[RMDB]
RNA sequence: GGGAACGACUCGAGUAGAGUCGAAAAGAGGUUGAUCGAUUCUUAAUGUCCUGUGGAUUUUAAGUUCCCAAAACUGUUGCUUAGGACAUACAAGAUCGUUCAAUGUCCAAGAAGAAACCUGAGCCGCCUAAGCGUGUGAAUUCGUUCACACGCUUAGAAAAGAAACAACAACAACAAC
Reactivity to DMS in 0.01 (KOAc 150mM, MgCl2 10mM, bicine 150mM(pH8.5), 24C), signal-to-noise 3, nucleotides 027 to 126: g000a060g000g020u010u020g000a010u000c010g010a030u020u000c000u000u010a100a040u000g000u000c000c000u000g030u020g000g010a110u010u010u010u010a040a100g000u000u000c000c000c030a080a050a070a050c090u020g000u010u000g020c070u010u000a030g010g000a030c010a010u000a110c190a040a040g000a020u000c030g000u000u000c000a030a000u010g000u000c000c030a120a150g020a080a090g020a070a080a070c040c010u000g010a070g010c050c070g000c130
Reactivity to 2A3 in 0.01 (KOAc 150mM, MgCl2 10mM, bicine 150mM(pH8.5), 24C), signal-to-noise 3, nucleotides 027 to 126: g100a040g090g020u020u040g000a010u020c010g000a030u300u020c010u020u060a050a010u020g000u000c000c010u090g070u200g080g060a090u000u020u020u120a140a060g000u020u040c010c010c020a040a060a020a020c130u120g110u210u120g070c010u050u160a000g010g010a020c000a000u120a060c070a040a000g010a030u010c000g020u010u000c010a010a000u020g070u130c020c030a040a040g040a030a010g050a060a050a020c000c000u030g020a010g040c000c020g030c060